[RMDB]
Chemical mapping of a 177-nucleotide RNA with DMS and 2A3. For 2A3 the reverse transcriptase was SuperScript II with manganese. For 2A3, 3,983 sequencing reads were counted. For DMS, 1,327 sequencing reads were counted.

RNA sequence: GGGAACGACUCGAGUAGAGUCGAAAAACUAGGAGCGCACAUCUCUGUAAGACUGUACGACAGUCUGUCUCUCUAGCACGCUUGUUCAACGAGAGAGAGAGAGCGUUGGAACAAGUGUGCAACGAAAUGCUUCCAUUUACUUCGGUAAAUGGAAGCAAAAAGAAACAACAACAACAAC
Reactivity to DMS in 0.01 (KOAc 150mM, MgCl2 10mM, bicine 150mM(pH8.5), 24C), signal-to-noise 2, nucleotides 027 to 126: a130c100u020a060g000g010a030g000c110g000c140a050c170a110u000c020u010c030u030g000u000a060a120g010a010c020u000g010u000a130c110g000a240c300a010g000u000c010u020g000u010c040u000c010u000c000u000a240g010c020a030c010g010c010u000u010g020u000u020c000a010a020c030g000a060g010a110g000a100g000a090g000a040g000a000g030c000g000u000u000g010g000a010a010c010a000a000g040u000g010u010g000c010a020a040c250g000a020a050a080
Reactivity to 2A3 in 0.01 (KOAc 150mM, MgCl2 10mM, bicine 150mM(pH8.5), 24C), signal-to-noise 2, nucleotides 027 to 126: a020c080u080a080g020g020a040g000c060g050c050a030c010a250u070c020u000c010u030g030u010a050a000g000a010c000u020g100u170a060c140g080a040c090a000g000u010c000u040g040u010c060u010c000u020c030u030a020g000c000a000c020g010c000u000u000g000u000u010c000a010a000c010g000a000g020a000g000a000g010a010g000a000g010a190g000c010g000u010u030g160g020a030a000c010a010a000g000u010g000u000g000c000a000a010c050g010a000a080a020